[RMDB]
RNA sequence: GGGAACGACUCGAGUAGAGUCGAAAAGUCUCUCGGACGACCCACUCCUCCUCCCUAGGGGCGUCCGAUGGAACGGUGGCACUCCUCCUCCCAGCCGCUGUUCACUCUUUUAAAAAGCCUGCCGCACGCCGCUCAUAAUAUUCGUAUUAUGAGCGGCAAAAGAAACAACAACAACAAC
Reactivity to DMS in 0.01 (KOAc 150mM, MgCl2 10mM, bicine 150mM(pH8.5), 24C), signal-to-noise 1, nucleotides 027 to 126: g000u000c010u010c030u050c000g030g040a000c000g000a040c000c010c000a080c150u000c000c010u020c020c000u020c000c010c000u000a070g010g000g020g000c000g000u000c000c000g010a050u050g000g000a020a080c080g000g040u050g000g020c050a100c040u000c080c060u000c070c050u010c000c130c000a050g030c010c010g000c020u000g000u010u000c010a120c160u040c000u040u000u020u060a050a070a130a060a050g020c050c060u000g000c000c000g000c060a070c120
Reactivity to 2A3 in 0.01 (KOAc 150mM, MgCl2 10mM, bicine 150mM(pH8.5), 24C), signal-to-noise 3, nucleotides 027 to 126: g050u010c010u000c000u020c050g010g010a010c000g270a300c000c000c010a070c030u050c030c010u070c010c000u010c000c010c010u060a060g020g020g000g000c000g000u000c010c000g000a060u090g060g010a040a030c000g010g000u020g020g000c020a020c060u090c010c030u050c010c010u010c010c010c010a020g000c010c010g000c010u010g010u020u020c000a030c040u090c010u020u110u130u170a100a160a020a000a010g010c000c010u020g010c000c010g000c020a020c060
Structure probing data (DMS and 2A3) for a 177-nucleotide construct. 2A3 adducts were read by reverse transcription with SuperScript II with manganese. For DMS the reverse transcriptase was MarathonRT. 2A3 is a SHAPE reagent: it acylates the 2'-hydroxyl of flexible nucleotides of all four kinds.